Structure probing data (2A3) for a 177-nucleotide construct. The reactions ran in a buffer of 150 mM KOAc, 10 mM MgCl2 and 150 mM bicine (pH 8.5), at 24 C.
[RMDB]
RNA sequence: GGGAACGACUCGAGUAGAGUCGAAAAUCACAAAGCGGAUUUAGCUCGGUUGGGAGAGGUCCAGACCGAAGAUCUGGGCUUCCUGUGUCCGAGACACAGAAUUCGCACCAUAAACAACGGGAGAUUCGGUCGUAUGGGUGUUCGCACCCAUACGACCAAAAGAAACAACAACAACAAC
Reactivity to 2A3 in 0.01 (KOAc 150mM, MgCl2 10mM, bicine 150mM(pH8.5), 24C), signal-to-noise 1, nucleotides 027 to 126: u070c000a020c080a080a240a000g000c040g000g000a000u000u000u000a000g000c000u000c000g000g000u300u140g110g000g000a300g000a080g100g000u000c030c000a010g020a000c000c220g260a050a050g100a080u000c000u000g000g000g000c000u000u000c000c000u180g090u080g060u000c040c020g030a000g180a080c000a000c000a100g020a000a000u000u000c000g000c000a050c000c000a000u080a050a300a000c120a000a000c110g000g000g080a250g000a070u140u140c020